[RMDB]
RNA sequence: GGGAACGACUCGAGUAGAGUCGAAAAUAAUGAGCCUGCAUUUAUUAUGCAUGUUUCUUGGUACAUUAUGUUCGGGCCUAUCGUUCCCAUAUGGAUGACCUGCGUCUAUACAGUUGCAAUGUGCUUUACGACGUCAUGUUCGCAUGACGUAAAAGAAACAACAACAACAAC
Reactivity to 2A3 in 0.01 (KOAc 150mM, MgCl2 10mM, bicine 150mM(pH8.5), 24C), signal-to-noise 6, nucleotides 027 to 129: u070a000a020u020g010a020g080c000c030u010g000c000a000u020u070u080a210u220u190a000u070g000c050a000u100g100u040u210u050c110u050u090g050g020u040a050c000a000u010u030a020u090g090u020u020c040g150g260g020c000c010u050a060u080c000g000u000u000c000c000c000a000u080a010u030g030g010a000u040g070a050c040c080u100g030c020g000u010c040u000a050u020a040c070a080g020u040u000g000c010a050a080u070g060u060g070c000u050u060u040a090c090g030
Reactivity to DMS in 0.01 (KOAc 150mM, MgCl2 10mM, bicine 150mM(pH8.5), 24C), signal-to-noise 6, nucleotides 027 to 129: u030a010a010u020g010a300g040c010c030u040g020c000a040u010u030u070a130u080u040a000u000g020c030a080u040g030u000u000u000c100u020u020g030g020u000a190c040a040u030u020a040u000g000u000u040c040g020g000g050c130c050u000a110u000c030g010u010u030c000c030c020a140u080a000u030g030g020a000u000g030a100c040c030u030g020c000g040u010c070u040a000u000a100c230a080g020u010u010g030c110a060a100u000g020u030g000c040u010u010u020a110c110g040

The record gives the reactivity of an RNA of 170 nucleotides to 2A3 and DMS.
The reactions ran in a buffer of 150 mM KOAc, 10 mM MgCl2 and 150 mM bicine (pH 8.5), at 24 C.
For 2A3 the reverse transcriptase was SuperScript II with manganese.
Source: RMDB library 15KLIB, as collected in RNAgym.